[RMDB]
RNA sequence: GGGAACGACUCGAGUAGAGUCGAAAAUGGGCUACCAGUAAGCGAAAAAUGAUACAGGACGGAAAAAACAUAAUUCGAGAUUUUUCAGGAUGGAUUUUUUUAGGUAUCUAUCAAAACUAUUCUGAUGCAACGUAGAGCACGUUCGCGUGCUCUACAAGGUACUUCACAACUUCGGUUGUGAAGUACCAAAAGAAACAACAACAACAAC
Reactivity to 2A3 in 0.01 (KOAc 150mM, MgCl2 10mM, bicine 150mM(pH8.5), 24C), signal-to-noise 2, nucleotides 027 to 156: u060g020g010g010c010u050a050c020c010a030g060u070a050a020g040c040g050a100a090a000a020a020u040g010a000u030a060c010a030g030g000a010c040g050g050a010a020a020a020a050a050c030a050u160a060a070u150u120c050g000a020g060a220u050u160u030u080u040c010a000g000g000a010u010g040g010a080u050u010u000u000u000u030u030a010g050g010u160a040u220c010u000a000u000c000a020a000a000a000c000u000a010u030u000c000u030g010a060u050g100c040a070a030c050g010u000a010g000a000g000c000a010c000g020u050u030c050g020c000g070u010g000c000u000c000u000a000c000a000a000
An RNA of 207 nucleotides, treated with 2A3 and read out base by base. Reactivities are given for positions 27 through 156.